[RMDB]
RNA sequence: GGGAACGACUCGAGUAGAGUCGAAAAUCUUUACGAGCUUCCUCUGGGGUUAAGUUUCUUUCCAAGUCAUCUCCAGUACCUGUAGGGGUCUACAAGAGGAUAGACAGAGGUAUCCCCACAUAAGCAUAUUUACCAAUAAAGGCGGUCGUUAAGACCGGCGCAUACGAAAAUUCGUUUUCGUAUGCGCAAAAGAAACAACAACAACAAC
Reactivity to 2A3 in 0.01 (KOAc 150mM, MgCl2 10mM, bicine 150mM(pH8.5), 24C), signal-to-noise 1, nucleotides 027 to 156: u070c000u010u110u100a070c060g060a020g080c000u050u000c000c000u040c080u030g050g000g000g010u030u010a120a000g000u030u020u080c000u030u070u000c020c060a040a000g020u070c010a030u060c000u020c020c010a020g000u070a030c000c020u110g060u290a080g000g060g000g090u010c020u090a090c000a050a100g020a050g130g000a040u050a020g070a000c020a000g030a010g040g000u020a130u070c030c000c000c010a020c000a060u120a030a010g000c000a000u280a300u110u170u140a060c060c050a050a100u250a290a040a260g130g000c000g010g010u030c000g040u060u130a130a000g000a050c040c000g000